[RMDB]
RNA sequence: GGGAACGACUCGAGUAGAGUCGAAAAGAUUGAGCUUCAGCCGGAUGCCCAGUUGACGGAUGGUUUGCGACGGUUGGAUGAAUGUGCGUCCAACAUAUGCAUUCUUCAUCAGACCCUGCCCGUAAGAUACCACUGGAGUAUUCGUACUCCAGUGGUAAAAAGAAACAACAACAACAAC
Reactivity to 2A3 in 0.01 (KOAc 150mM, MgCl2 10mM, bicine 150mM(pH8.5), 24C), signal-to-noise 2, nucleotides 027 to 126: g060a030u080u070g020a050g010c000u060u050c010a060g070c040c050g090g030a060u080g020c000c010c020a050g040u060u140g030a060c080g030g060a020u060g050g000u030u050u020g000c010g020a040c110g100g040u010u000g040g010a010u040g060a150a110u260g030u190g230c020g000u000c010c020a010a000c010a010u100a060u160g050c000a000u000u000c000u080u070c000a040u010c020a020g000a090c010c000c000u020g020c000c010c020g050u030a040a100g060a110
Reactivity to DMS in 0.01 (KOAc 150mM, MgCl2 10mM, bicine 150mM(pH8.5), 24C), signal-to-noise 3, nucleotides 027 to 126: g010a110u000u010g000a090g000c040u000u010c100a070g020c070c090g020g000a120u010g010c030c010c000a060g010u000u000g010a090c120g020g010a040u000g000g000u000u000u010g020c030g000a100c260g000g020u000u010g000g020a020u000g020a110a110u010g000u020g010c030g020u010c030c020a000a040c050a010u000a130u010g010c000a020u010u000c050u000u010c010a030u000c010a160g000a100c020c030c020u010g020c010c000c010g010u010a070a080g000a300